[RMDB]
RNA sequence: GGGAACGACUCGAGUAGAGUCGAAAAGUAGUGCUCGAGAGGGAGGCUGUCUCGCAGAGCUUUUAGAUCUUCUGAUCUUUCCCUCCUCCAUAUCGCUUAUCCGUCAAGCGAUAGACGCAUAAUUAAAAAGGCUAAUUUAAUUCGUUAAAUUAGCCUUAAAAGAAACAACAACAACAAC
Reactivity to 2A3 in 0.01 (KOAc 150mM, MgCl2 10mM, bicine 150mM(pH8.5), 24C), signal-to-noise 1, nucleotides 027 to 126: g000u000a000g110u020g080c030u030c090g090a070g020a020g140g100g010a010g140g000c070u030g170u130c050u000c000g020c050a030g020a050g060c040u070u000u020u000a020g000a010u000c010u230u060c120u300g000a000u010c000u000u010u000c000c000c000u010c010c000u050c030c010a050u030a020u060c030g010c000u060u020a040u090c060c140g220u220c100a020a050g000c010g030a020u000a040g030a030c090g000c150a020u040a130a240u300u130a060a170a050
Reactivity to DMS in 0.01 (KOAc 150mM, MgCl2 10mM, bicine 150mM(pH8.5), 24C), signal-to-noise 6, nucleotides 027 to 126: g020u000a080g010u000g010c030u010c050g010a060g010a200g010g000g000a050g020g000c130u010g010u010c010u000c050g020c140a150g010a220g010c010u000u000u000u000a010g000a010u000c010u010u010c280u010g010a010u000c000u000u000u000c000c000c000u000c010c010u000c010c020a170u000a010u000c000g010c010u000u000a120u010c110c150g010u000c110a040a030g000c010g010a010u000a010g000a080c190g010c110a060u010a080a110u020u010a030a070a070